Chemical mapping of a 177-nucleotide RNA with 2A3 and DMS. 2A3 adducts were read by reverse transcription with SuperScript II with manganese. Source: RMDB library OK2TST, as collected in RNAgym.
[RMDB]
RNA sequence: GGGAACGACUCGAGUAGAGUCGAAAACAUCUGUGUACGAAAAGGAGAAGGAAUUAAACAGCGACAAUGUCUCUUUGGCCUCGGACCUGACCAGAAUGUAUGUGAGCGAUGAGGACGAUCGACUUGACCUCAUGACUAGUUUCGACUAGUCAUGAGGAAAAGAAACAACAACAACAAC
Reactivity to 2A3 in 0.01 (KOAc 150mM, MgCl2 10mM, bicine 150mM(pH8.5), 24C), signal-to-noise 2, nucleotides 027 to 126: c020a040u050c010u070g110u010g040u140a050c040g070a040a080a100a080g080g030a050g020a050a040g070g010a030a000u090u080a150a140a030c030a040g030c020g100a010c040a010a160u090g070u050c010u000c000u150u000u100g020g000c010c000u000c000g050g050a050c010c000u030g060a000c000c040a040g040a130a020u080g070u120a020u190g060u020g050a020g030c030g000a050u070g020a030g080g000a010c040g050a050u080c040g080a070c000u000u070g030a040
Reactivity to DMS in 0.01 (KOAc 150mM, MgCl2 10mM, bicine 150mM(pH8.5), 24C), signal-to-noise 3, nucleotides 027 to 126: c080a100u000c040u010g020u000g010u000a050c090g010a060a050a060a050g020g000a100g030a090a050g020g010a090a110u000u010a080a090a090c130a060g000c060g010a050c100a070a060u030g000u000c010u000c040u000u000u000g040g010c030c020u010c090g000g000a110c160c040u000g000a050c040c030a070g000a120a060u000g010u020a090u000g010u010g000a100g040c040g000a130u010g040a110g000g000a070c050g010a050u000c070g010a100c040u000u000g010a280